[RMDB]
This 177-nucleotide RNA was probed chemically with DMS.

RNA sequence: GGGAACGACUCGAGUAGAGUCGAAAACGCAUGCUCAAGCUGGCGCAGAUGUGGUUGCCCCUUCCGAUAUGAUGGAUGGCCGCAUCGGGCGUAUUCGUCAAGCAUUGGAAGAGGCGGGGUACGUUCACGUAGCAUCGGGGUUCGCCCCGAUGCUACGAAAAGAAACAACAACAACAAC
Reactivity to DMS in 0.01 (KOAc 150mM, MgCl2 10mM, bicine 150mM(pH8.5), 24C), signal-to-noise 1, nucleotides 027 to 126: c100g000c040a090u000g010c010u010c070a120a120g030c090u000g010g010c040g020c060a110g020a060u000g000u000g010g030u000u020g000c040c010c040c020u010u000c000c010g000a060u010a040u000g020a020u010g020g000a050u010g010g010c020c000g000c180a170u010c240g010g010g000c020g000u060a070u000u000c000g030u000c010a040a040g000c210a060u010u000g000g000a070a040g020a050g040g030c020g000g000g000g000u010a080c050g020u000u000c080a180
Overview:
For DMS the reverse transcriptase was MarathonRT.